An RNA of 177 nucleotides, treated with 2A3 and DMS and read out base by base.

RNA sequence: GGGAACGACUCGAGUAGAGUCGAAAAAAGAUAUGGAACCGUGAACUACUCGGAAGUGGCUCCAACAGCUUCGCUCGGAAACGAGCGAAGACAUGGAGCCUCAGUACGAGCACGGUUCCUAAGUCAAUCAUAUAUACAGCUUCGGCUGUAUAUAUGAAAAAGAAACAACAACAACAAC
Reactivity to 2A3 in 0.01 (KOAc 150mM, MgCl2 10mM, bicine 150mM(pH8.5), 24C), signal-to-noise 4, nucleotides 027 to 126: a000a050g050a030u070a010u080g000g000a010a000c000c010g010u010g000a090a100c070u220a060c010u300c020g070g110a070a100g300u090g040g000c020u000c000c020a080a100c100a130g010c010u010u010c000g000c000u000c010g040g020a100a110a080c010g000a000g000c000g000a000a000g000a000c010a060u060g000g000a000g010c000c000u000c000a010g010u030a010c000g000a000g000c010a000c000g020g020u000u010c000c000u000a010a000g020u000c010a000a100
Reactivity to DMS in 0.01 (KOAc 150mM, MgCl2 10mM, bicine 150mM(pH8.5), 24C), signal-to-noise 5, nucleotides 027 to 126: a090a090g010a060u000a300u000g000g010a010a000c010c000g000u000g000a090a050c080u010a300c010u000c020g000g000a210a300g020u010g020g010c000u000c000c000a010a100c270a210g000c010u000u000c000g020c000u000c000g000g010a080a080a220c000g020a010g010c000g010a010a000g000a020c090a160u000g000g010a010g010c000c000u000c010a020g010u000a200c010g030a020g000c000a010c000g020g000u000u000c000c000u000a010a070g010u010c030a160a220
Conditions: 150 mM KOAc, 10 mM MgCl2 and 150 mM bicine (pH 8.5), 24 C. 2A3 is a SHAPE reagent: it acylates the 2'-hydroxyl of flexible nucleotides of all four kinds. DMS adducts were read by reverse transcription with MarathonRT. For 2A3, 6,999 sequencing reads were counted.